The record gives the reactivity of an RNA of 177 nucleotides to 2A3.
2A3 is a SHAPE reagent: it acylates the 2'-hydroxyl of flexible nucleotides of all four kinds.
For 2A3, 633 sequencing reads were counted.

RNA sequence: GGGAACGACUCGAGUAGAGUCGAAAAUGAAAUGUGCGCAGAGUCUCGCUCCAUUUCCACCUUUGCAAUUGCACAGGCGGCGCCCAUCCCAACAACCUGCGCCGUCGCCACAGUGCCGCUCCGCACAGGUGGGGCAGGGUUUCGACCCUGCCCCACCAAAAGAAACAACAACAACAAC
Reactivity to 2A3 in 0.01 (KOAc 150mM, MgCl2 10mM, bicine 150mM(pH8.5), 24C), signal-to-noise 1, nucleotides 027 to 126: u280g060a020a020a070u130g020u020g000c030g010c000a030g040a090g060u010c000u020c070g060c010u000c060c000a090u010u020u000c010c000a020c030c040u050u000u000g030c050a100a190u250u140g010c020a040c040a090g030g000c010g000g000c000g030c000c000c010a110u100c030c040c000a050a110c090a000a040c000c000u020g060c000g000c010c010g000u020c000g060c020c000a070c010a020g000u000g050c000c000g000c010u020c000c030g020c020a090c000a170